RNA sequence: GGGAACGACUCGAGUAGAGUCGAAAAUGGAAUUGUUCUCCUUGGGAAUUUUGGUCUGGGUUCGAACCCUACGGCCAGACGCGGAGGCACGCCUUUAAUUAUUACACCGUUUCGGUGGGGGCAAAGGAGCAAGCUGGGCUCGCCCAGCCUGUUCCUGGUAAUAGAGGGUGUUCGCACCCUCUAUUACAAAAGAAACAACAACAACAAC
Reactivity to 2A3 in 0.01 (KOAc 150mM, MgCl2 10mM, bicine 150mM(pH8.5), 24C), signal-to-noise 1, nucleotides 027 to 156: u080g060g020a020a080u110u030g000u070u140c020u000c010c000u080u080g030g040g150a190a170u180u130u140u090g020g000u010c020u020g000g000g010u030u200c040g020a060a080c030c000c000u000a000c100g020g010c010c010a000g000a010c050g010c100g020g000a040g010g000c010a000c070g020c000c000u040u050u020a130a050u060u240a060u140u100a010c010a020c040c030g180u170u260u280c080g020g010u020g000g010g000g020g000c020a150a040a000g000g000a000g000c000a000a020g020c000u010g000g040g000c080u110c140g100c000c000c000a000g000c000c000u000g000u000u000c000c000u000g000
An RNA of 207 nucleotides, treated with 2A3 and read out base by base.
The data come from the RNA Mapping Database (RMDB), library ARCHII.
For 2A3, 568 sequencing reads were counted.
Reactivities are rounded to 0.1 and cut off at 0 and 3.